[RMDB]
Description:
An RNA of 177 nucleotides, treated with 2A3 and DMS and read out base by base. The DMS profile rests on 5,475 reads. The reactions ran in a buffer of 150 mM KOAc, 10 mM MgCl2 and 150 mM bicine (pH 8.5), at 24 C.
RNA sequence: GGGAACGACUCGAGUAGAGUCGAAAACAGGCGUGAGCCACCGUGCCCGGCUAAUUAGAGACUGGGUUUCACCAUGUUUGCCAGGCUGGCGUGGAACUCCUGGCCUCUAGUGAUCCUCCUGCCUCACUGAGUCUCAUUAUUUCGAUAAUGAGACUCAAAAAGAAACAACAACAACAAC
Reactivity to 2A3 in 0.01 (KOAc 150mM, MgCl2 10mM, bicine 150mM(pH8.5), 24C), signal-to-noise 2, nucleotides 027 to 126: c020a020g030g000c000g050u090g030a000g040c000c040a020c000c060g040u060g000c000c020c020g010g040c030u060a080a150u180u140a110g010a000g020a120c030u040g010g000g000u020u060u080c020a020c000c020a040u120g040u030u070u080g040c000c020a020g090g010c060u040g060g030c080g040u090g060g010a060a030c010u010c010c010u010g040g050c020c010u000c000u000a030g020u010g030a030u020c010c010u000c000c000u040g030c010c000u020c010a060c050
Reactivity to DMS in 0.01 (KOAc 150mM, MgCl2 10mM, bicine 150mM(pH8.5), 24C), signal-to-noise 4, nucleotides 027 to 126: c060a070g010g020c060g030u010g000a150g010c030c010a060c070c050g010u000g010c010c010c030g030g010c020u000a060a080u010u010a070g000a080g000a040c010u010g010g000g000u010u010u000c130a080c020c020a040u000g000u000u010u010g010c030c060a070g000g020c060u000g020g010c090g000u000g010g010a110a070c040u010c000c040u000g000g000c040c030u010c030u000a030g000u010g010a070u000c020c010u000c020c030u000g000c020c030u000c050a110c210

High DMS reactivity at an A or C suggests that its Watson-Crick edge is free.